[RMDB]
RNA sequence: GGGAACGACUCGAGUAGAGUCGAAAAGACAAAGCGACUCAGCAAAUGUGUCUAAAAUUUUAAACGGACAGUCUAGUUGUAGUAAAUGAACCGUUGGGUUGUGUCAACCCGAAAGACUGUUUACGGCCCUAUCUGGAGAGUUCGCUCUCCAGAUAGGAAAAGAAACAACAACAACAAC
Reactivity to 2A3 in 0.01 (KOAc 150mM, MgCl2 10mM, bicine 150mM(pH8.5), 24C), signal-to-noise 4, nucleotides 027 to 126: g020a000c040a030a230a000g060c010g040a040c030u020c080a030g010c030a040a060a230u100g070u040g040u020c030u100a100a110a130a120u220u270u150u220a080a120a000c000g000g020a000c020a000g030u000c040u120a030g030u080u090g170u110a090g050u080a030a110a180u210g050a070a010c040c030g030u050u050g000g000g010u050u000g080u030g050u090c030a060a050c000c000c000g010a000a000a030g030a000c000u010g050u030u050u080a070c010g060g010c000
Reactivity to DMS in 0.01 (KOAc 150mM, MgCl2 10mM, bicine 150mM(pH8.5), 24C), signal-to-noise 3, nucleotides 027 to 126: g010a020c000a130a110a120g050c010g030a020c040u040c050a060g040c000a110a130a120u020g010u010g010u010c020u010a030a070a060a070u000u000u000u050a050a080a140c070g000g000a020c000a030g000u000c000u010a070g000u000u010g010u000a090g030u020a020a080a110u010g000a050a040c080c130g000u030u010g000g000g010u000u000g010u030g010u020c010a010a060c000c010c020g010a040a070a030g000a000c030u000g000u000u000u000a120c060g000g000c300

Overview
Structure probing data (2A3 and DMS) for a 177-nucleotide construct. For DMS the reverse transcriptase was MarathonRT. The reactions ran in a buffer of 150 mM KOAc, 10 mM MgCl2 and 150 mM bicine (pH 8.5), at 24 C. The DMS profile rests on 6,020 reads.